[RMDB]
RNA sequence: GGGAACGACUCGAGUAGAGUCGAAAAUUCGUUGGCAAAGAAAAAGAAAAGAAGUGACCCAGGGUUGCAACGAAAUAAUAUGUACAGGAUCACUAAAGAUGGUACCAGGAGACCAACUUAAAAAUAAAGCUACCUAAAUAUUCGUAUUUAGGUAGCUAAAAGAAACAACAACAACAAC
Reactivity to DMS in 0.01 (KOAc 150mM, MgCl2 10mM, bicine 150mM(pH8.5), 24C), signal-to-noise 4, nucleotides 027 to 126: u000u020c030g020u000u000g000g020c080a060a050a100g010a050a100a040a080a110g000a060a080a080a070g000a100a060g000u000g020a020c040c010c040a110g000g010g040u010u000g010c010a030a050c020g020a060a060a060u010a070a090u040a090u010g000u010a060c080a100g010g010a020u000c010a030c020u000a060a040a060g010a060u010g000g000u020a040c020c110a120g000g030a100g010a050c030c020a000a050c050u000u030a000a040a030a090a090u040a040a090
Reactivity to 2A3 in 0.01 (KOAc 150mM, MgCl2 10mM, bicine 150mM(pH8.5), 24C), signal-to-noise 3, nucleotides 027 to 126: u030u000c020g000u010u010g160g000c070a060a110a120g210a130a160a070a010a030g150a040a100a030a040g200a080a010g010u010g030a030c010c010c020a040g020g180g000u070u060g040c020a000a010c020g020a000a060a000u240a060a000u190a070u180g070u040a020c010a020g000g020a090u020c010a000c000u020a050a080a070g060a050u020g000g000u050a130c050c110a120g070g090a140g030a020c000c000a010a050c020u090u120a080a150a040a000a030u110a040a130
Chemical mapping of a 177-nucleotide RNA with DMS and 2A3. The 2A3 profile rests on 3,120 reads. The DMS profile rests on 6,009 reads. As a SHAPE reagent, 2A3 marks flexible, mostly unpaired nucleotides at the ribose 2'-OH.